[RMDB]
RNA sequence: GGGAACGACUCGAGUAGAGUCGAAAAGAUAUGGAUGGAUUCCUCCUACCCACCUAGUCCGUCGGAAACGACGGGUCUAGAGGGAGGAGAUCCAUCCUAAGUCAAAAUCUUAGGUUCGCCUAAGAAAUCAUUCAUAACACUUCGGUGUUAUGAAUGAAAAAGAAACAACAACAACAAC
Reactivity to 2A3 in 0.01 (KOAc 150mM, MgCl2 10mM, bicine 150mM(pH8.5), 24C), signal-to-noise 4, nucleotides 027 to 126: g040a000u080a030u170g010g010a000u000g020g010a010u210u200c080c000u020c000c010u300a300c050c010c020a180c100c000u000a010g030u010c010c010g000u000c000g030g050a090a060a090c010g000a000c010g000g000g010u020c000u000a010g010a040g020g000g000a000g000g000a000g020a000u000c000c000a000u000c000c000u010a030a010g030u010c020a010a000a050a300u030c000u000u000a020g070g000u060u080c300g040c050c010u030a020a010g000a080a040a020
Reactivity to DMS in 0.01 (KOAc 150mM, MgCl2 10mM, bicine 150mM(pH8.5), 24C), signal-to-noise 4, nucleotides 027 to 126: g000a060u010a300u010g010g010a010u010g010g010a010u000u000c230c010u010c000c000u000a160c020c020c070a300c190c000u000a010g020u010c000c000g000u000c000g010g000a120a090a210c000g020a000c000g000g010g000u010c010u010a000g000a260g030g000g010a060g000g000a040g000a010u000c000c000a000u000c000c000u020a020a120g020u010c040a110a090a150a150u000c000u000u000a010g000g000u000u010c300g020c000c000u000a010a010g000a020a140a140
This 177-nucleotide RNA was probed chemically with 2A3 and DMS. The RNA was probed in 150 mM KOAc, 10 mM MgCl2 and 150 mM bicine (pH 8.5) at 24 C. For DMS, 3,620 sequencing reads were counted. For 2A3 the reverse transcriptase was SuperScript II with manganese.